[RMDB]
RNA sequence: GGGAACGACUCGAGUAGAGUCGAAAAUAAGCUGACCAGCUGUGAGGUCAUACAUCGUCAUAGCACUAAGAAGAGAGAUCUUCGAGGACAGAGAUGUCCAAGACGACGAGAACAUCGUCGUCGAUACGUACUGGACGAAUUUCGAUUUGUCUAGUACAAAAGAAACAACAACAACAAC
Reactivity to 2A3 in 0.01 (KOAc 150mM, MgCl2 10mM, bicine 150mM(pH8.5), 24C), signal-to-noise 9, nucleotides 027 to 126: u200a030a020g090c060u020g000a000c000c000a000g000c000u000g000u000g010a000g000g010u010c030a020u140a140c070a100u130c110g040u000c000a000u010a010g000c000a020c060u090a080a040g000a010a000g010a000g010a010g020a050u000c000u000u000c010g030a110g000g000a000c000a000g050a000g020a040u030g000u000c000c000a010a030g000a000c000g000a000c000g000a000g020a070a060c080a160u010c000g000u000c000g000u000c000g000a020u040a060c080
Reactivity to DMS in 0.01 (KOAc 150mM, MgCl2 10mM, bicine 150mM(pH8.5), 24C), signal-to-noise 9, nucleotides 027 to 126: u050a080a100g010c150u000g010a030c010c010a170g000c000u010g000u000g000a030g000g010u000c030a080u040a090c210a070u030c110g020u000c000a020u000a020g010c010a190c230u030a100a110g000a010a010g000a010g000a190g010a130u000c000u000u000c000g010a140g000g000a020c010a010g000a140g000a120u000g010u010c010c010a110a090g000a010c000g000a010c000g000a010g000a140a080c190a070u000c000g010u000c000g010u000c000g010a070u040a050c200